[RMDB]
RNA sequence: GGGAACGACUCGAGUAGAGUCGAAAACCGGUCUGUCGCAACGUCGUGCCUGCAGGCUUACAGGUUUGUCCCUGUCGACCUGCCGUUAUGAUGCUCAGCGUCCGGCUGCUGAUGCACAUUUAUCAGGUCCUAGAGUUGAGUUCGCUCAACUCUAGGAAAAAGAAACAACAACAACAAC
Reactivity to 2A3 in 0.01 (KOAc 150mM, MgCl2 10mM, bicine 150mM(pH8.5), 24C), signal-to-noise 3, nucleotides 027 to 126: c000c000g020g030u020c030u030g030u040c010g040c040a060a050c030g010u020c020g000u040g050c020c010u040g010c000a010g020g010c000u020u010a010c010a040g040g090u110u210u190g090u180c000c010c010u020g010u010c110g030a130c000c000u000g000c000c020g000u040u020a030u040g100a050u020g010c060u020c080a000g000c010g020u000c000c030g020g040c020u050g000c010u020g030a030u120g050c080a050c030a200u090u140u110a150u060c020a020g090g050
Reactivity to DMS in 0.01 (KOAc 150mM, MgCl2 10mM, bicine 150mM(pH8.5), 24C), signal-to-noise 4, nucleotides 027 to 126: c010c010g020g020u000c030u000g010u010c090g020c050a080a070c100g020u000c040g020u000g010c050c020u000g020c020a040g020g010c010u000u010a030c040a040g000g000u000u000u010g010u020c240c000c010u000g010u000c080g000a050c010c010u010g010c080c140g020u010u010a030u010g000a070u010g010c080u000c060a040g010c000g010u000c060c050g020g010c050u000g000c000u020g000a050u000g010c100a080c080a050u000u000u000a080u010c050a050g010g010